[RMDB]
RNA sequence: GGGAACGACUCGAGUAGAGUCGAAAAGUGAUCUUGGAAAUGAUAAUCUCAUAAGCAAACUACUGUUAGCAGGAACAGAAACAUAAUACUCCUGGUAAUGGUGGAUAUAAGAAUUAAGCUGAGGAGGGAAAGUGUGAGAUACACAGUGAGAUGCAGAUCACCACGUGAUAUUCGUAUCACGUGGUGAAAAAGAAACAACAACAACAAC
Reactivity to DMS in 0.01 (KOAc 150mM, MgCl2 10mM, bicine 150mM(pH8.5), 24C), signal-to-noise 2, nucleotides 027 to 156: g000u000g010a050u010c020u000u040g050g010a100a070a110u040g020a140u000a050a050u010c020u040c030a100u000a090a150g020c040a040a180a150c000u000a010c020u010g040u000u000a020g010c030a040g000g000a040a300c050a120g000a100a070a120c060a080u000a160a100u010a110c030u010c000c000u000g010g020u000a010a000u000g030g010u040g000g000a160u000a040u010a050a130g020a070a090u020u000a100a140g000c050u000g020a060g010g010a070g040g040g000a060a030a030g010u000g010u000g020a080g000a100u000a130c070a050c060a150g000u000g010a060g010a080u000g060c030a040g020a290
Reactivity to 2A3 in 0.01 (KOAc 150mM, MgCl2 10mM, bicine 150mM(pH8.5), 24C), signal-to-noise 2, nucleotides 027 to 156: g080u050g010a060u010c010u040u040g040g080a040a060a050u110g020a110u100a100a100u030c010u020c030a040u010a110a070g030c040a160a020a030c010u020a010c000u030g000u010u020a020g100c000a010g000g030a020a030c030a080g140a120a200a020c060a050u290a180a060u110a230c000u010c000c000u010g010g080u000a000a000u020g000g000u010g000g000a000u030a010u010a230a000g060a030a090u140u050a060a000g000c000u000g020a010g050g030a020g010g010g000a020a040a050g010u030g010u020g070a030g000a040u070a040c020a000c030a030g010u030g070a030g010a020u050g010c010a000g000a070
Chemical mapping of a 207-nucleotide RNA with DMS and 2A3. The reactions ran in a buffer of 150 mM KOAc, 10 mM MgCl2 and 150 mM bicine (pH 8.5), at 24 C. Source: RMDB library OK3TST, as collected in RNAgym. For DMS, 2,077 sequencing reads were counted.